The record gives the reactivity of an RNA of 177 nucleotides to 2A3 and DMS. It was measured as part of the RMDB library OK2TST.
[RMDB]
RNA sequence: GGGAACGACUCGAGUAGAGUCGAAAAUUGAGCACAUUGGGCUUCCAAUUGGCGAUAACCCAGUCGCGUGCCUCUUGAAUUUCGGUAGGAUUAGUACUAUUCGCACUAUAGCCUAGGUACUUCAAUGUCGACACUAUUAAUUCGUUAAUAGUGUCGAAAAAGAAACAACAACAACAAC
Reactivity to 2A3 in 0.01 (KOAc 150mM, MgCl2 10mM, bicine 150mM(pH8.5), 24C), signal-to-noise 9, nucleotides 027 to 126: u030u050g010a020g000c010a020c020a090u020u050g030g040g050c110u300u110c030c010a050a090u070u130g090g010c020g000a010u030a070a070c000c010c010a010g040u020c020g000c020g060u020g010c000c010u080c030u060u110g110a140a110u110u120u130c060g060g000u060a030g030g060a060u080u050a030g050u030a020c020u060a160u090u140c050g010c020a020c040u080a040u120a160g030c010c010u020a030g030g020u030a040c000u020u040c040a070a080u140g060
Reactivity to DMS in 0.01 (KOAc 150mM, MgCl2 10mM, bicine 150mM(pH8.5), 24C), signal-to-noise 9, nucleotides 027 to 126: u000u000g000a110g010c010a050c080a110u000u000g000g010g020c180u010u010c030c030a050a070u010u010g020g010c030g000a050u000a080a150c020c010c010a170g000u000c030g020c040g020u000g000c040c020u000c070u000u000g000a080a100u000u000u000c050g010g010u000a040g000g010a150u010u000a040g010u000a030c030u000a140u010u010c130g020c050a040c070u000a070u000a130g010c080c030u000a040g000g010u000a030c080u000u000c060a060a070u000g000